[RMDB]
RNA sequence: GGGAACGACUCGAGUAGAGUCGAAAAUAGCGCAGGCGCUGUCACUAGAGUAUGACGGCCCACAUGGCCCGUACUGAUCAGGCCUCGCAGGCCGGAUCGCGCAGGCCGCGCGUAGCGCAUCGCGAUCUCGCAACUGAGUAUUCGUACUCAGUUGCGAAAAAGAAACAACAACAACAAC
Reactivity to 2A3 in 0.01 (KOAc 150mM, MgCl2 10mM, bicine 150mM(pH8.5), 24C), signal-to-noise 2, nucleotides 027 to 126: u110a020g020c020g000c050a060g010g020c110g010c080u000g010u020c000a020c130u130a110g040a040g300u140a130u100g050a040c030g010g000c000c050c000a110c050a050u220g020g000c000c000c000g020u050a050c070u090g020a020u010c010a010g000g000c030c010u010c040g110c070a010g000g000c000c040g010g000a000u020c020g000c040g000c040a030g010g020c000c000g030c000g010c000g020u030a030g000c010g000c000a020u080c020g020c010g040a060u010c030
Reactivity to DMS in 0.01 (KOAc 150mM, MgCl2 10mM, bicine 150mM(pH8.5), 24C), signal-to-noise 2, nucleotides 027 to 126: u010a110g020c020g000c030a150g010g020c150g010c000u000g000u000c030a050c100u020a130g000a130g010u000a090u000g000a040c020g010g000c010c030c050a100c250a050u000g010g040c000c000c060g040u000a060c060u000g020a010u000c010a050g020g000c000c000u020c260g000c270a190g020g010c010c000g000g000a010u000c000g020c010g040c060a090g000g020c010c060g020c030g000c030g000u000a040g010c000g000c020a130u010c010g010c040g000a100u000c130
The record gives the reactivity of an RNA of 177 nucleotides to 2A3 and DMS. For DMS the reverse transcriptase was MarathonRT. It was measured as part of the RMDB library OK2TRN. The 2A3 profile rests on 2,622 reads. Values are in units of 0.01, from 0 to 300, in steps of 10. The RNA was probed in 150 mM KOAc, 10 mM MgCl2 and 150 mM bicine (pH 8.5) at 24 C.